[RMDB]
RNA sequence: GGGAACGACUCGAGUAGAGUCGAAAACGCUUAAAGACACUCACCACCCGCAAAAAUAUCCCCGGGCUAGUCUUUUGUGGGGUUUUGAGCGUCGGAUGGAGCAGGGACUGGAGAUGGUUUGUCACCCCAUACCUUGAAUGUUCGCAUUCAAGGUAUGAAAAGAAACAACAACAACAAC
Reactivity to 2A3 in 0.01 (KOAc 150mM, MgCl2 10mM, bicine 150mM(pH8.5), 24C), signal-to-noise 2, nucleotides 027 to 126: c040g010c020u040u080a110a070a000g070a000c020a000c040u020c010a010c040c020a070c000c020c000g020c020a020a040a080a070a060u090a070u130c010c010c000c030g070g010g010c020u030a040g080u190c000u050u090u070u050g020u020g020g040g000g000u030u020u060u060g010a010g000c010g020u030c030g010g040a050u080g030g010a020g040c020a030g040g070g000a050c040u030g010g000a040g040a070u040g030g110u060u090u130g070u030c040a060c030c000c000
Reactivity to DMS in 0.01 (KOAc 150mM, MgCl2 10mM, bicine 150mM(pH8.5), 24C), signal-to-noise 4, nucleotides 027 to 126: c120g000c040u010u000a060a090a160g000a040c020a080c020u000c010a060c100c130a170c020c000c010g010c040a010a030a060a100a110u010a070u000c020c020c030c070g020g000g010c080u010a050g000u000c060u000u000u000u010g020u010g000g010g000g020u000u000u000u000g010a060g020c030g010u000c040g000g020a090u010g000g000a070g020c060a060g010g000g000a060c060u000g000g000a080g010a080u000g000g010u000u000u010g000u010c070a140c030c020c060

Chemical mapping of a 177-nucleotide RNA with 2A3 and DMS.
Reactivities are given for positions 27 through 126.
The 2A3 profile rests on 1,801 reads.
2A3 adducts were read by reverse transcription with SuperScript II with manganese.